The record gives the reactivity of an RNA of 177 nucleotides to DMS and 2A3.

RNA sequence: GGGAACGACUCGAGUAGAGUCGAAAAAGACAUUCCUGCACCGCGAUGGAACCGUCACGACCGACGGGGCGACGGAUUGGGGUGGCUCGGCGGGGUUCUGGACGUCCCCGUGAUGGAGCGCGGCCCGCAUCCGCGCAGACUUCGGUCUGCGCGGAUGAAAAGAAACAACAACAACAAC
Reactivity to DMS in 0.01 (KOAc 150mM, MgCl2 10mM, bicine 150mM(pH8.5), 24C), signal-to-noise 1, nucleotides 027 to 126: a050g000a210c170a080u000u000c000c000u000g000c130a090c010c050g010c110g000a290u100g010g010a030a120c000c020g000u000c000a020c110g030a230c120c110g020a030c160g040g000g000g010c080g030a110c100g030g000a030u030u010g010g000g000g000u000g010g030c010u020c000g040g140c030g010g000g000g030u030u000c000u000g000g000a110c050g010u000c000c000c000c000g000u020g010a030u040g000g040a120g060c000g050c070g000g040c030c000c120g000
Reactivity to 2A3 in 0.01 (KOAc 150mM, MgCl2 10mM, bicine 150mM(pH8.5), 24C), signal-to-noise 2, nucleotides 027 to 126: a000g080a000c040a060u040u050c010c010u020g030c060a020c000c010g030c000g070a050u140g130g080a140a070c000c000g010u000c010a000c250g110a090c010c070g020a040c010g000g010g050g020c000g010a060c020g020g010a000u070u120g020g000g000g030u020g010g040c000u000c040g030g030c000g000g020g000g030u140u030c050u140g020g110a120c090g010u000c000c010c030c000g070u130g020a150u110g160g000a020g000c040g000c060g010g100c000c030c000g000

Reactivities are given for positions 27 through 126. The data come from the RNA Mapping Database (RMDB), library RFM100. The 2A3 profile rests on 1,021 reads. The RNA was probed in 150 mM KOAc, 10 mM MgCl2 and 150 mM bicine (pH 8.5) at 24 C.